[RMDB]
RNA sequence: GGGAACGACUCGAGUAGAGUCGAAAAUAUUACAUCUUCGGAUGUAAUAACUGGUGGUGGCUGGCUUGUAGCUAGUGGCGCAACUGUUGCCAUGACUGCGCAAUCGCUCUGAAUUCGUUCAGAGCAACAUAUUUACGGCUUUCGAGCCGUAAAUAUGAAAAGAAACAACAACAACAAC
Reactivity to 2A3 in 0.01 (KOAc 150mM, MgCl2 10mM, bicine 150mM(pH8.5), 24C), signal-to-noise 4, nucleotides 027 to 126: u020a000u010u010a000c000a000u010c010u040u030c190g140g000a010u010g000u000a010a000u010a030a040c060u050g050g000u030g020g030u020g060g000c050u010g030g020c010u050u090g030u060a010g020c020u030a040g070u020g100g020c010g020c010a090a190c120u160g110u230u100g020c010c010a030u060g040a050c080u070g020c040g010c050a020a070u130c090g000c010u000c000u000g010a010a010u060u040c140g060u090u010c020a000g000a010g000c010a000a000
Reactivity to DMS in 0.01 (KOAc 150mM, MgCl2 10mM, bicine 150mM(pH8.5), 24C), signal-to-noise 6, nucleotides 027 to 126: u000a010u000u000a000c000a010u000c000u000u010c180g030g010a010u000g000u000a010a010u000a030a120c120u000g010g020u000g000g020u010g010g020c050u010g000g000c070u000u010g020u010a070g010c020u000a080g020u010g000g010c010g000c040a130a110c160u010g010u000u000g010c020c030a060u000g000a110c100u000g010c060g010c130a110a070u020c150g000c000u010c000u000g010a020a030u000u010c190g020u000u000c000a000g000a010g000c010a040a050